[RMDB]
RNA sequence: GGGAACGACUCGAGUAGAGUCGAAAACUGUUAUACCGAAGAGAAAUCUUGUCAGGUCUACACGCAAGUGUUGAAUGAAAAUUUAAUCGUAUUUGUAAAUACGACACCUUGUGUGGAAGCUGUCCUUCACCCUCACACGAUUCGUCGUGUGAGGGUGAAAAGAAACAACAACAACAAC
Reactivity to 2A3 in 0.01 (KOAc 150mM, MgCl2 10mM, bicine 150mM(pH8.5), 24C), signal-to-noise 2, nucleotides 027 to 126: c020u030g020u190u140a100u020a030c070c010g000a010a000g220a050g000a120a090a000u030c000u000u060g180u020c080a060g040g000u000c020u060a010c010a000c030g030c010a000a000g000u050g080u300u050g050a000a020u190g110a010a000a000a100u090u190u110a010a000u020c030g010u000a000u000u000u160g210u300a000a000a000u000a000c000g000a000c000a000c000c000u000u000g000u000g000u000g000g000a000a000g010c070u090g070u030c000c050u030u000
The record gives the reactivity of an RNA of 177 nucleotides to 2A3. 2A3 adducts were read by reverse transcription with SuperScript II with manganese. The RNA was probed in 150 mM KOAc, 10 mM MgCl2 and 150 mM bicine (pH 8.5) at 24 C.